[RMDB]
RNA sequence: GGGAACGACUCGAGUAGAGUCGAAAAAUACAUACUGACACCGGUUGCUCAACAGGCUGUGUGGGACAAUAGAAUAACAAGGCUGUCAAUUUGAGCUUGACGGCUGCAAACCGAAUGGAGAGAAAUCGUAACCGGACUCACUUCGGUGAGUCCGGAAGGACUAGACGUAGUUCGCUACGUCUAGUCCAAAAGAAACAACAACAACAAC
Reactivity to 2A3 in 0.01 (KOAc 150mM, MgCl2 10mM, bicine 150mM(pH8.5), 24C), signal-to-noise 1, nucleotides 027 to 156: a000u140a020c080a020u050a170c010u020g150a010c000a090c050c050g010g000u090u040g010c010u010c050a050a040c040a150g000g010c050u010g030u030g000u110g060g000g070a030c080a050a110u160a080g060a130a140u200a210a000c000a100a000g000g080c010u000g000u000c000a000a030u030u080u140g040a000g000c000u000u000g020a000c000g040g010c090u030g020c050a000a000a280c040c040g050a020a060u100g060g000a020g000a000g030a100a000a000u150c020g020u020a060a080c000c000g020g000a000c000u000c000a000c000u040u100c150g100g000u010g000a000g000u010c000c000g020g000a000a000